[RMDB]
RNA sequence: GGGAACGACUCGAGUAGAGUCGAAAACAAUUCAGAACUUGCACAGAAUCUGAGAAGCUGAAGUAGGACUGUGAUUGGGAGCUUGUGGAGAGGUCUAUGGAAAUUAUCAUGCUGCUGAAAUUGUUGCCUCUAUUUAUCUGCUACCCUUCUGGUCCGAACUAUUACUACGUUUCGACGUAGUAAUAGUAAAAGAAACAACAACAACAAC
Reactivity to 2A3 in 0.01 (KOAc 150mM, MgCl2 10mM, bicine 150mM(pH8.5), 24C), signal-to-noise 8, nucleotides 027 to 156: c020a020a050u070u040c010a010g040a080a070c040u080u170g030c080a070c020a080g150a160a120u110c040u100g030a050g020a110a030g040c080u090g030a090a020g060u120a060g010g010a000c000u030g040u100g160a130u120u100g000g010g000a010g020c030u120u100g060u080g070g050a020g000a000g020g020u030c060u100a070u110g040g080a040a070a050u110u100a110u160c040a050u110g110c070u050g000c020u040g060a080a090a050u100u070g060u070u110g010c000c000u010c020u030a120u050u150u070a100u050c020u010g040c000u260a300c000c000c090u010u010c000u020g010g000u000c000c000g000a000
Reactivity to DMS in 0.01 (KOAc 150mM, MgCl2 10mM, bicine 150mM(pH8.5), 24C), signal-to-noise 3, nucleotides 027 to 156: c030a060a130u000u000c030a050g000a060a140c040u000u000g010c060a190c070a160g010a170a130u000c050u010g020a120g000a080a130g020c050u000g010a060a120g000u010a130g010g000a060c020u000g010u000g010a080u010u000g010g030g020a090g020c040u000u000g010u000g030g010a110g030a050g030g030u000c100u010a060u000g030g000a100a050a080u000u010a070u000c030a090u010g010c040u000g000c050u000g010a060a060a080u000u000g000u000u000g020c000c000u010c010u010a110u010u010u010a100u010c070u000g010c010u000a090c000c000c050u000u000c030u000g020g020u010c010c030g000a060

Structure probing data (2A3 and DMS) for a 207-nucleotide construct. Reactivities are given for positions 27 through 156. For DMS the reverse transcriptase was MarathonRT. For 2A3, 5,795 sequencing reads were counted. Conditions: 150 mM KOAc, 10 mM MgCl2 and 150 mM bicine (pH 8.5), 24 C.